Source information: Chemical mapping of a 177-nucleotide RNA with 2A3 and DMS. For 2A3 the reverse transcriptase was SuperScript II with manganese.

[RMDB]
RNA sequence: GGGAACGACUCGAGUAGAGUCGAAAACAUCGCAGGACGCAAAGAACGGCUCAUCCUUCUUUGAAGUCAAAUCGAUGCCAGUGGCUGAAGAAAGCGAUUCACCGCUAGGAGUCGACAGCAGCACAUACCUAGGGGAUUAGUUCGCUAAUCCCCUAGGAAAAGAAACAACAACAACAAC
Reactivity to 2A3 in 0.01 (KOAc 150mM, MgCl2 10mM, bicine 150mM(pH8.5), 24C), signal-to-noise 3, nucleotides 027 to 126: c020a000u040c020g000c040a010g200g050a010c010g020c010a010a000a010g020a020a030c150g030g000c110u080c110a250u300c030c000u000u020c010u040u010u040g050a210a020g000u000c010a000a100a010u120c010g010a010u020g060c000c000a050g030u030g060g020c050u040g030a060a010g110a090a200a030g080c010g000a000u020u070c060a050c100c040g030c120u110a100g080g000a020g040u040c000g010a040c010a030g040c020a010g030c020a030c010a070u130a100
Reactivity to DMS in 0.01 (KOAc 150mM, MgCl2 10mM, bicine 150mM(pH8.5), 24C), signal-to-noise 4, nucleotides 027 to 126: c040a030u000c030g030c280a290g030g000a030c030g020c010a020a020a010g010a020a020c210g050g000c260u020c300a100u010c010c000u000u000c000u000u000u010g010a060a080g000u000c010a070a050a150u000c010g000a010u010g010c030c060a090g000u000g010g010c090u000g010a080a080g000a080a060a110g000c070g000a050u000u000c040a110c080c120g020c070u010a090g020g020a020g000u000c000g010a080c050a050g000c010a040g030c040a080c120a080u010a130
The DMS profile rests on 3,204 reads.